[RMDB]
RNA sequence: GGGAACGACUCGAGUAGAGUCGAAAAGGGGACGUUACGGAUUCGACAGGGAUAGAUUGAGCUCAGGUUGCACGUCGAGGUUACGGCUCGUAAAACGUUAUGCCUAAAUAUAACUGGCAAAGAAACUAAUCAACCUGUUUUAGCAGCUGCGUAAGUACGUGUACUUUACCUUCGGGUAAAGUACACGAAAAGAAACAACAACAACAAC
Reactivity to DMS in 0.01 (KOAc 150mM, MgCl2 10mM, bicine 150mM(pH8.5), 24C), signal-to-noise 2, nucleotides 027 to 156: g010g010g060g010a080c090g020u030u000a100c040g020g020a240u010u000c030g000a060c030a060g000g000g000a160u010a070g000a090u010u000g010a080g000c050u000c010a080g020g020u000u000g010c080a060c070g010u040c050g010a090g000g030u010u010a080c070g000g020c040u010c010g040u000a050a060a030a070c030g020u010u000a150u000g010c000c000u000a050a070a120u010a130u010a110a170c080u000g040g000c040a050a060a100g020a170a050a090c110u000a060a120u010c030a070a040c020c030u000g000u000u010u000u000a080g000c020a070g010c050u000g000c010g030u000a020a200g040u020a080
Reactivity to 2A3 in 0.01 (KOAc 150mM, MgCl2 10mM, bicine 150mM(pH8.5), 24C), signal-to-noise 4, nucleotides 027 to 156: g040g000g000g010a020c010g030u050u070a030c060g010g060a060u070u050c050g060a020c040a040g020g050g010a000u030a050g060a060u030u110g030a000g030c030u020c060a010g000g020u020u020g020c060a030c080g080u070c010g050a000g010g000u050u030a020c020g030g000c020u010c010g100u120a010a010a010a010c010g010u040u020a040u110g000c000c020u070a090a120a070u290a040u060a130a080c080u020g000g000c000a060a030a000g080a050a110a020c120u160a050a090u060c020a020a030c030c030u030g020u060u120u010u030a040g000c030a000g040c030u080g000c030g020u060a070a050g030u020a050

Structure probing data (DMS and 2A3) for a 207-nucleotide construct. The 2A3 profile rests on 2,318 reads. The data come from the RNA Mapping Database (RMDB), library ARCHII. Conditions: 150 mM KOAc, 10 mM MgCl2 and 150 mM bicine (pH 8.5), 24 C. 2A3 adducts were read by reverse transcription with SuperScript II with manganese.